[RMDB]
RNA sequence: GGGAACGACUCGAGUAGAGUCGAAAACUAUCCCGGGGUCAAGUAUGAUGAUUGGAGCCGAAUGGCCUAGAAAAUGCAUCCGUUCCGUCCUCGGAGAUGAUUGAGUAGCUGUCCCGGUCGGUGUCUCGUAUGCUUAGUGGUUCGCCACUAAGCAUACAAAAGAAACAACAACAACAAC
Reactivity to 2A3 in 0.01 (KOAc 150mM, MgCl2 10mM, bicine 150mM(pH8.5), 24C), signal-to-noise 8, nucleotides 027 to 126: c020u040a040u040c010c000c000g000g010g000g000u030c050a090a080g060u080a120u170g030a030u020g020a030u040u180g080g030a090g020c020c020g150a190a190u300g020g000c010c010u080a080g130a080a130a010a030u200g050c010a010u000c030c020g040u080u040c030c040g020u030c010c000u030c030g020g000a160g000a090u070g010a020u030u150g040a030g040u060a010g010c030u030g020u080c020c000c000g000g000u030c050g010g010u040g030u020c010u000c060
Reactivity to DMS in 0.01 (KOAc 150mM, MgCl2 10mM, bicine 150mM(pH8.5), 24C), signal-to-noise 4, nucleotides 027 to 126: c130u010a110u040c010c000c000g030g010g000g030u000c050a100a110g020u010a050u010g000a050u010g010a090u000u000g020g010a150g020c030c020g030a090a080u040g030g050c020c040u020a040g000a050a090a110a090u020g010c010a020u000c040c060g030u010u000c080c040g000u000c020c020u000c030g000g000a100g010a030u000g000a070u020u000g000a060g010u010a050g000c060u010g000u020c010c020c010g020g030u010c040g000g020u000g000u000c050u000c090